RNA sequence: GGGAACGACUCGAGUAGAGUCGAAAACCUACUCAAUACGUCCUCGUCGUACAGAACGGUAACAUGUUUUCCGAACAUCCGCGCUUGGGUAUAUGAGUAUACACCUUACCCAACCCUCGCCAACGGGAGUGCAUCCACGAGUUCGCUCGUGGAUGAAGACAUUUUGCGCAUUCGUGCGCAAAAUGUCAAAAGAAACAACAACAACAAC
Reactivity to 2A3 in 0.01 (KOAc 150mM, MgCl2 10mM, bicine 150mM(pH8.5), 24C), signal-to-noise 1, nucleotides 027 to 156: c000c000u010a060c010u020c020a030a090u090a200c060g160u060c030c000u040c010g220u080c000g010u090a050c030a100g040a080a060c010g000g020u090a000a080c110a240u190g060u000u030u040u000c030c030g010a100a110c010a090u060c050c020g040c010g000c010u090u000g000g000g100u040a080u040a040u040g130a050g050u010a000u030a040c080a050c030c030u130u230a110c000c000c000a000a060c000c000c010u040c040g060c060c020a110a040c030g010g040g000a040g010u120g020c030a000u000c000c000a020c000g000a000g000u000u160c270g080c120u000c000g000u000g000g010a000u000g000a000a000